This 177-nucleotide RNA was probed chemically with DMS and 2A3. It was measured as part of the RMDB library OK2TST. In probing experiments dimethyl sulfate is read out at A N1 and C N3, which are open when not base-paired.
RNA sequence: GGGAACGACUCGAGUAGAGUCGAAAAGGAUGCCGAGGCAAGUUAAGGCCAAGGGCGUCCAUCUGGCCACGGUCAGGGCUGACGAUGGCCUCCUGACGCUCGGCAUCGAGGGGGCUAGGAGGCUUCACGGAUUAGGUGAUUUCGAUCACCUAAUCCGAAAAGAAACAACAACAACAAC
Reactivity to DMS in 0.01 (KOAc 150mM, MgCl2 10mM, bicine 150mM(pH8.5), 24C), signal-to-noise 4, nucleotides 027 to 126: g020g010a000u000g030c000c000g000a300g010g000c020a080a090g020u000u010a110a120g010g010c010c020a060a170g020g000g010c030g020u010c010c010a100u000c020u000g000g010c010c010a090c260g040g000u020c060a020g010g000g000c120u010g020a130c160g000a160u000g010g000c000c010u000c060c030u000g000a080c060g000c010u000c020g000g040c190a110u010c020g030a070g020g000g010g010g000c060u010a010g010g020a070g020g000c030u000u010c040a140
Reactivity to 2A3 in 0.01 (KOAc 150mM, MgCl2 10mM, bicine 150mM(pH8.5), 24C), signal-to-noise 3, nucleotides 027 to 126: g040g000a000u020g000c000c000g030a040g020g020c040a080a080g040u160u280a120a070g120g000c000c010a010a040g270g030g020c020g000u000c000c000a020u020c000u010g010g000c020c000a080c180g070g000u040c020a020g030g060g040c060u090g020a040c070g070a090u120g010g020c020c000u030c000c010u050g040a050c040g030c090u040c000g060g040c050a070u140c010g010a030g000g050g000g000g050c020u020a040g040g020a020g050g000c000u030u020c030a020